[RMDB]
RNA sequence: GGGAACGACUCGAGUAGAGUCGAAAACAUGGUAUAUAACCUGAUGACUUUUCUAUUUCACUAAAAUUAGAUGAGGUGCUUGCACUAUUCACUGCACAGAGGCGUAAUCCUCCAAUAUGAAAAUAAAAUCGGCUCAUAGAUUCGUCUAUGAGCCGAUAAAAGAAACAACAACAACAAC
Reactivity to 2A3 in 0.01 (KOAc 150mM, MgCl2 10mM, bicine 150mM(pH8.5), 24C), signal-to-noise 3, nucleotides 027 to 126: c080a080u160g000g070u020a180u020a040u050a190a040c000c000u000g060a070u090g050a080c030u050u080u030u000c000u050a090u000u080u130c030a030c030u190a140a050a060a130u170u070a040g110a110u060g010a060g090g000u000g020c030u070u020g040c020a010c040u030a100u120u090c070a000c050u010g040c010a040c000a080g030a030g010g030c050g040u050a040a140u030c000c000u000c010c000a100a000u100a120u280g100a050a020a010a000u190a040a200a000
Reactivity to DMS in 0.01 (KOAc 150mM, MgCl2 10mM, bicine 150mM(pH8.5), 24C), signal-to-noise 2, nucleotides 027 to 126: c120a000u030g010g000u050a060u020a130u000a140a030c000c040u000g000a260u000g000a040c110u070u000u010u000c020u000a060u020u000u000c120a160c140u010a040a070a020a110u010u040a040g030a090u000g030a030g000g020u000g000c030u020u020g030c100a090c020u030a060u010u000c040a000c030u000g000c090a090c110a070g000a010g020g010c090g000u010a120a130u100c000c000u010c040c030a090a050u020a100u100g010a140a000a070a020u020a030a050a060
The record gives the reactivity of an RNA of 177 nucleotides to 2A3 and DMS. Conditions: 150 mM KOAc, 10 mM MgCl2 and 150 mM bicine (pH 8.5), 24 C. For DMS, 1,484 sequencing reads were counted. DMS (dimethyl sulfate) methylates the pairing face of unpaired adenines and cytosines. For 2A3 the reverse transcriptase was SuperScript II with manganese. The 2A3 profile rests on 1,194 reads.